[RMDB]
RNA sequence: GGGAACGACUCGAGUAGAGUCGAAAAAACUUCGGUACCGUGUAUAUCUACAACAACUGAGGCUAAACUGGUUGCGGCUGAGAACUCAUCCAUCACUUUUUCAAUGAGCAUUUCGUUGCUUUUGGACAAAAUAUAAUGCGUUCGCGCAUUAUAUUUUAAAAGAAACAACAACAACAAC
Reactivity to 2A3 in 0.01 (KOAc 150mM, MgCl2 10mM, bicine 150mM(pH8.5), 24C), signal-to-noise 6, nucleotides 027 to 126: a000a000c070u100u060c040g030g010u030a090c030c030g040u020g030u030a040u020a060u140c090u050a050c020a110a000c000a040a030c090u100g040a020g070g000c060u110a080a050a060c040u050g050g000u050u040g010c030g030g020c020u020g030a020g020a120a030c020u000c020a050u030c040c000a030u080c020a060c090u050u080u020u090u110c060a090a110u160g040a050g030c030a070u090u140u130c080g030u040u020g010c050u030u010u040u040g020g010a020c030
Reactivity to DMS in 0.01 (KOAc 150mM, MgCl2 10mM, bicine 150mM(pH8.5), 24C), signal-to-noise 7, nucleotides 027 to 126: a070a060c050u010u010c020g020g010u000a040c100c050g020u010g000u020a050u020a060u030c100u030a050c080a070a070c090a060a060c060u010g000a070g000g010c040u010a030a060a100c070u010g000g000u010u010g020c110g010g010c040u010g000a080g000a050a090c050u000c040a050u020c030c030a050u000c050a070c050u010u010u010u010u010c060a030a040u030g000a060g000c050a060u000u020u010c140g010u010u000g000c060u010u000u000u000g000g000a300c220